[RMDB]
RNA sequence: GGGAACGACUCGAGUAGAGUCGAAAAUCUGUACGUUUUCCACGGAGGCCCUGUUGAGGUGGAGUGCGGUCCCGAGGGCGUAGAGAAAGAACGGUGUGUCUAUGGAUGCGACACGGAUACGGGUGUAGCCUGUAUGAGUGUUCGCACUCAUACAGGCAAAAGAAACAACAACAACAAC
Reactivity to DMS in 0.01 (KOAc 150mM, MgCl2 10mM, bicine 150mM(pH8.5), 24C), signal-to-noise 4, nucleotides 027 to 126: u000c030u000g010u000a060c060g010u000u000u010u010c010c050a120c080g010g010a150g020g010c020c020c030u010g010u000u000g010a140g010g010u010g020g010a100g020u000g010c090g020g000u000c010c000c020g010a090g000g000g030c040g010u000a020g000a060g010a070a080a080g000a080a080c070g000g020u010g010u000g010u000c050u000a140u010g000g010a070u010g000c080g000a050c030a020c030g010g000a080u000a040c060g000g000g010u000g000u010a140
Reactivity to 2A3 in 0.01 (KOAc 150mM, MgCl2 10mM, bicine 150mM(pH8.5), 24C), signal-to-noise 4, nucleotides 027 to 126: u020c000u030g140u070a010c020g000u040u000u130u070c030c030a040c020g030g020a110g030g020c010c030c000u070g080u110u130g110a110g010g070u090g010g050a050g020u090g030c050g000g030u000c010c000c010g010a060g010g020g000c020g010u040a050g000a000g000a050a160a000g070a060a020c060g030g060u060g010u020g020u050c000u040a080u120g080g020a040u050g060c030g030a020c020a020c030g000g030a080u110a070c030g010g020g020u080g040u110a030